[RMDB]
RNA sequence: GGGAACGACUCGAGUAGAGUCGAAAAGAUAUGGAUAUAGGAAGCGCAAUGGAGGUCGGAAACGACUACCCACCCAUUGAACUACGCUUGCUAUAUCCUAAGUCAAACUGCUAGUUCGCUAGCAGAAGAUCGAUAAAAAGUUCGCUUUUUAUCGAUCAAAAGAAACAACAACAACAAC
Reactivity to 2A3 in 0.01 (KOAc 150mM, MgCl2 10mM, bicine 150mM(pH8.5), 24C), signal-to-noise 5, nucleotides 027 to 126: g010a000u060a040u160g010g000a010u010a000u010a020g120g050a010a000g000c020g000c060a010a000u010g020g000a020g010g010u020c020g000g020a070a070a060c030g000a010c000u060a070c040c050c000a050c010c000c010a010u000u020g030a090a050c100u190a040c250g020c000u010u040g090c000u010a000u000a000u010c010c000u010a050a010g030u000c020a020a030a140c010u000g000c000u000a000g030u060u060c300g020c170u000a000g000c000a000g000a010a030
Reactivity to DMS in 0.01 (KOAc 150mM, MgCl2 10mM, bicine 150mM(pH8.5), 24C), signal-to-noise 5, nucleotides 027 to 126: g010a030u010a300u000g000g000a010u000a010u000a010g010g010a030a000g000c010g020c020a000a030u000g000g020a100g040g000u010c010g010g010a120a100a220c000g010a020c000u000a110c030c040c090a300c060c000c010a010u000u000g000a020a090c180u010a300c020g000c000u000u010g010c000u000a010u000a000u000c000c000u000a010a110g000u000c040a070a090a200c010u000g000c010u000a000g000u010u020c240g020c000u000a000g000c000a000g000a080a110
Structure probing data (2A3 and DMS) for a 177-nucleotide construct. Reactivities are rounded to 0.1 and cut off at 0 and 3. For 2A3, 14,131 sequencing reads were counted. Conditions: 150 mM KOAc, 10 mM MgCl2 and 150 mM bicine (pH 8.5), 24 C. For 2A3 the reverse transcriptase was SuperScript II with manganese. DMS adducts were read by reverse transcription with MarathonRT.